An RNA of 177 nucleotides, treated with 2A3 and read out base by base. Values are in units of 0.01, from 0 to 300, in steps of 10. Reactivities are given for positions 27 through 126. 2A3 adducts were read by reverse transcription with SuperScript II with manganese. The data come from the RNA Mapping Database (RMDB), library OK1LIB.
[RMDB]
RNA sequence: GGGAACGACUCGAGUAGAGUCGAAAACUCGAAAGAGACCUGCAUAUCUUAGGCAGAUGAGCAAGUCACGUCUGAAAAGCGAAAGCCCUAAGAUAUGCAGCUGUGAAGACUUGUCGCAGAAAAUAAACCCAUGACUGACGUUCGCGUCAGUCAUGGGAAAAGAAACAACAACAACAAC
Reactivity to 2A3 in 0.01 (KOAc 150mM, MgCl2 10mM, bicine 150mM(pH8.5), 24C), signal-to-noise 1, nucleotides 027 to 126: c000u000c000g040a010a010a000g110a000g000a060c000c000u000g000c000a000u020a000u000c000u000u000a000g010g020c010a020g020a010u000g010a040g020c020a000a000g030u000c020a030c030g000u000c000u030g120a300a240a050a040g040c050g010a100a040a010g000c010c000c000u010a010a000g000a000u030a000u000g000c000a000g010c000u000g000u020g000a070a000g000a000c000u010u000g000u030c030g000c020a000g140a010a120a000a000u220a080a100a010